[RMDB]
RNA sequence: GGGAACGACUCGAGUAGAGUCGAAAAGCACACCAUAUCUUCUACUAGAAACCAUUUGUAAAAGUCUAAAGCAUUGAAUUCUGGAUAUAAAUCAGUUUGUGCAAUGCAGUACACUGUGCGAUCAUUAGCAAAUUGAAAAACAGCCGCGCUGGUCCUCGAGAGCUUAUGAUUUCGAUCAUAAGCUCUCAAAAGAAACAACAACAACAAC
Reactivity to DMS in 0.01 (KOAc 150mM, MgCl2 10mM, bicine 150mM(pH8.5), 24C), signal-to-noise 1, nucleotides 027 to 156: g000c070a080c000a100c070c040a110u010a090u010c010u000u010c040u020a120c100u000a140g030a110a110a120c080c020a100u000u040u000g000u010a140a130a130a060g010u000c030u000a070a070a120g000c030a050u000u020g000a050a080u000u010c080u010g010g020a100u010a190u000a040a090a180u010c040a050g000u010u000u000g020u030g000c010a030a000u000g010c040a220g010u000a190c040a050c120u000g030u000g010c020g010a130u000c010a040u000u000a180g000c030a030a050a080u010u000g000a010a070a020a150a070c010a070g030c050c000g010c100g070c020u000g030g010u010c010c010u010c240
Reactivity to 2A3 in 0.01 (KOAc 150mM, MgCl2 10mM, bicine 150mM(pH8.5), 24C), signal-to-noise 3, nucleotides 027 to 156: g040c030a010c010a040c100c050a110u090a140u210c070u140u040c040u080a190c030u030a050g120a080a080a030c020c000a030u020u090u160g030u070a070a080a080a070g050u000c070u100a130a030a040g000c010a020u030u070g060a140a050u130u010c010u040g030g030a030u050a020u070a300a100a080u060c000a000g010u000u070u050g040u030g050c030a010a000u040g010c020a000g050u060a030c140a030c080u130g030u010g040c010g040a080u080c030a030u030u090a020g020c000a020a100a130u060u080g030a070a070a000a030a010c010a000g040c010c060g040c030g000c110u000g010g080u030c000c000u030c050
Structure probing data (DMS and 2A3) for a 207-nucleotide construct. For 2A3 the reverse transcriptase was SuperScript II with manganese. The data come from the RNA Mapping Database (RMDB), library OK3TST. Values are in units of 0.01, from 0 to 300, in steps of 10. The reactions ran in a buffer of 150 mM KOAc, 10 mM MgCl2 and 150 mM bicine (pH 8.5), at 24 C. For DMS, 1,607 sequencing reads were counted.